[RMDB]
RNA sequence: GGGAACGACUCGAGUAGAGUCGAAAAACGGUGCGGAAGUUCGCGCUUCCGUGAAACGCGAAAAUCGGACGGUGGCUGCAAGUCGCAUCGCAAAACUGCGGCAAGUGGAGUUAGCGAGAGGAGGCUGAAACCAUCCAACACUUCGGUGUUGGAUGAAUCUAGUCCAUCUCUUCGGAGAUGGACUAGAAAAAGAAACAACAACAACAAC
Reactivity to 2A3 in 0.01 (KOAc 150mM, MgCl2 10mM, bicine 150mM(pH8.5), 24C), signal-to-noise 1, nucleotides 027 to 156: a000c020g040g000u040g000c010g000g000a000a020g010u170u150c030g080c000g010c060u040u000c020c090g010u010g000a100a140a040c060g000c020g050a070a030a000a060u150c050g010g010a000c100g000g030u020g020g070c070u110g010c070a030a110g010u020c000g000c010a010u010c020g030c050a050a100a000a000c060u010g000c060g050g000c020a100a070g060u100g030g080a120g020u110u140a040g040c070g020a050g020a050g120g000a040g010g000c010u010g010a020a030a000c030c000a020u000c000c000a000a000c000a000c000u050u130c300g070g000u020g020u000u000g000g000a000u000g000a000a000

Structure probing data (2A3) for a 207-nucleotide construct. The 2A3 profile rests on 545 reads.